[RMDB]
RNA sequence: GGGAACGACUCGAGUAGAGUCGAAAAUAUCAGGUCGUUGGCGGGGUAAUGGCCCACCAAGCCGAAGACGGGUAGCGGGUGUGAGAGCACGACCCGCGACAUCGGGACUGAGACACUGCCCGGACUCGCAACAUCAAAGAUUCGUCUUUGAUGUUGCAAAAGAAACAACAACAACAAC
Reactivity to 2A3 in 0.01 (KOAc 150mM, MgCl2 10mM, bicine 150mM(pH8.5), 24C), signal-to-noise 6, nucleotides 027 to 126: u210a030u070c050a020g010g040u050c020g060u080u020g010g000c040g010g000g000g000u020a040a070u060g060g010c000c000c010a000c000c000a010a020g000c000c020g010a040a010g080a020c060g020g010g040u020a010g040c020g000g020g010u010g010u030g040a280g010a040g240c030a020c050g090a060c000c000c000g000c010g000a000c010a080u060c010g010g030g030a070c040u070g050a020g020a060c050a020c060u060g000c000c000c000g020g040a080c050u040c080
Reactivity to DMS in 0.01 (KOAc 150mM, MgCl2 10mM, bicine 150mM(pH8.5), 24C), signal-to-noise 4, nucleotides 027 to 126: u020a120u030c030a140g000g010u000c130g010u010u020g010g000c040g000g000g000g020u000a090a090u010g010g000c020c000c020a080c020c020a030a270g020c020c010g000a060a070g000a220c080g010g000g010u010a050g010c030g000g000g010u000g010u000g000a230g010a170g010c040a040c030g010a040c020c020c010g000c010g000a020c170a090u000c020g000g020g000a110c070u010g000a100g000a120c190a030c080u020g000c010c020c000g000g010a060c070u020c090